[RMDB]
RNA sequence: GGGAACGACUCGAGUAGAGUCGAAAACAGUAACGUGGGGCAGGGCUUGUGAUUCAACUCUGAGGACGGACCUUCACAACCGCUUCAGCAGCACUGACGAGGCUGCCCGAGACCCACAAGUGGCGCGACGACUGACCAGUUUCGACUGGUCAGUCGUAAAAGAAACAACAACAACAAC
Reactivity to 2A3 in 0.01 (KOAc 150mM, MgCl2 10mM, bicine 150mM(pH8.5), 24C), signal-to-noise 2, nucleotides 027 to 126: c010a020g150u150a020a000c010g030u100g000g000g120g000c090a060g000g120g030c100u110u120g000u100g060a160u100u160c020a160a130c070u030c000u010g030a040g000g000a030c030g070g080a180c000c040u300u230c170a190c130a170a080c000c040g000c020u000u000c030a070g010c070a000g010c000a060c040u000g000a000c030g080a000g060g070c040u040g020c000c000c000g000a020g010a000c000c000c000a060c000a030a040g020u060g080g020c130g000c050g010
Reactivity to DMS in 0.01 (KOAc 150mM, MgCl2 10mM, bicine 150mM(pH8.5), 24C), signal-to-noise 1, nucleotides 027 to 126: c050a130g000u050a170a030c120g000u000g020g000g000g000c000a110g000g000g000c000u000u000g020u050g000a000u000u000c000a000a220c130u000c030u000g040a050g000g000a180c000g000g000a110c070c180u140u040c050a230c220a090a000c010c000g050c000u010u070c000a010g000c060a030g000c020a110c050u000g000a130c120g000a180g090g000c030u080g020c000c000c010g000a060g080a130c030c040c000a030c070a110a160g030u000g000g010c000g000c090g010

Chemical mapping of a 177-nucleotide RNA with 2A3 and DMS. Values are in units of 0.01, from 0 to 300, in steps of 10. 2A3 adducts were read by reverse transcription with SuperScript II with manganese. Source: RMDB library OK1LIB, as collected in RNAgym.